[RMDB]
RNA sequence: GGGAACGACUCGAGUAGAGUCGAAAAAGCUGGUCGUUUUUGUACUGGUUUAACUGAUUCAUGGAGUCCUUGAAAAGGGAGUUAGUUUUGUAUUUUACUAUUUCGUACCGAGAUCCGUCACAGGUGCGCUAUUCCCCUUUUUCGAAAGGGGAAUAGCAAAAGAAACAACAACAACAAC
Reactivity to 2A3 in 0.01 (KOAc 150mM, MgCl2 10mM, bicine 150mM(pH8.5), 24C), signal-to-noise 3, nucleotides 027 to 126: a000g030c020u040g000g010u020c030g090u040u020u020u140u200g090u110a000c000u020g000g050u010u040u030a080a050c030u010g060a080u050u040c040a030u130g030g070a030g050u050c010c010u030u020g120a040a020a010a050g050g010g000a040g060u030u050a030g000u000u040u040u060g130u030a160u030u080u080u060a050c090u020a030u010u150u020c020g000u020a030c010c000g010a010g010a140u020c040c060g040u020c000a040c030a070g040g000u040g030c020
Reactivity to DMS in 0.01 (KOAc 150mM, MgCl2 10mM, bicine 150mM(pH8.5), 24C), signal-to-noise 2, nucleotides 027 to 126: a080g010c010u000g000g000u000c020g000u010u010u030u010u050g020u010a050c020u000g000g000u000u010u010a080a140c120u020g010a080u000u010c060a110u020g010g010a080g000u000c010c000u010u010g010a090a060a100a070g000g010g000a050g000u000u010a050g000u010u000u010u000g000u010a080u020u020u000u000a070c040u000a060u000u010u000c040g030u000a060c010c000g000a150g000a100u010c040c040g030u000c140a040c110a160g000g020u020g030c130

Description: An RNA of 177 nucleotides, treated with 2A3 and DMS and read out base by base. The RNA was probed in 150 mM KOAc, 10 mM MgCl2 and 150 mM bicine (pH 8.5) at 24 C. It was measured as part of the RMDB libraries RFM100 and RFMREP. Values cover nucleotides 27 to 126. DMS adducts were read by reverse transcription with MarathonRT.